[RMDB]
RNA sequence: GGGAACGACUCGAGUAGAGUCGAAAAUAACGAGUUUCCAAAGAACGGUCCAAAUAAUAAACUAGUCCCGAAGUUAUCAUGAGUAGCAACGAGACAGUUAAUUGUACCCUUGAUGUGACUCAAGCGGAGAAAGUCUUUAAGGAGUAUAAUCUAUUCCCGUGUUUAUGACGUUCGCGUCAUAAACACGAAAAGAAACAACAACAACAAC
Reactivity to 2A3 in 0.01 (KOAc 150mM, MgCl2 10mM, bicine 150mM(pH8.5), 24C), signal-to-noise 2, nucleotides 027 to 156: u200a040a060c050g020a000g040u020u040u050c030c000a080a120a020g020a110a040c080g010g040u060c030c030a090a050a050u240a060a050u100a030a200a030c010u020a080g030u000c020c000c010g010a020a020g000u000u050a020u100c060a200u190g040a100g100u020a000g000c000a000a040c000g000a000g000a000c000a000g000u000u070a060a060u070u020g040u020a030c020c000c020u010u020g060a050u100g080u110g070a010c000u000c080a070a020g050c070g040g010a040g040a090a090a010g030u000c000u050u140u050a000a030g010g000a030g030u040a020u020a110a090u020c040u040a060u040u010c000c010
Structure probing data (2A3) for a 207-nucleotide construct. For 2A3 the reverse transcriptase was SuperScript II with manganese. The reactions ran in a buffer of 150 mM KOAc, 10 mM MgCl2 and 150 mM bicine (pH 8.5), at 24 C.